Structure probing data (2A3) for a 177-nucleotide construct.
[RMDB]
RNA sequence: GGGAACGACUCGAGUAGAGUCGAAAAUAUCUGCCUGUUCAACUAAUUCAAUACCUUUUUGCAUUGCUUUACGAAACGAAAUUCUAUUCAGUAAUAGUUGGGCUAUAAAUUGUGCAAGAAUAUGAGGUGCGGCAGAAACGUUCGCGUUUCUGCCGCAAAAAGAAACAACAACAACAAC
Reactivity to 2A3 in 0.01 (KOAc 150mM, MgCl2 10mM, bicine 150mM(pH8.5), 24C), signal-to-noise 1, nucleotides 027 to 126: u020a080u000c170u260g150c000c000u000g000u000u020c030a030a000c000u050a000a140u020u000c000a030a030u070a300c000c080u300u000u000u000u000g030c050a120u300u000g000c000u000u000u000a080c140g040a290a190a000c050g070a070a020a020u300u000c030u080a100u080u140c000a000g040u030a200a100u080a050g000u100u000g000g000g000c000u000a000u100a250a010a010u210u090g000u050g050c070a170a080g120a100a000u080a030u120g100a080g000g070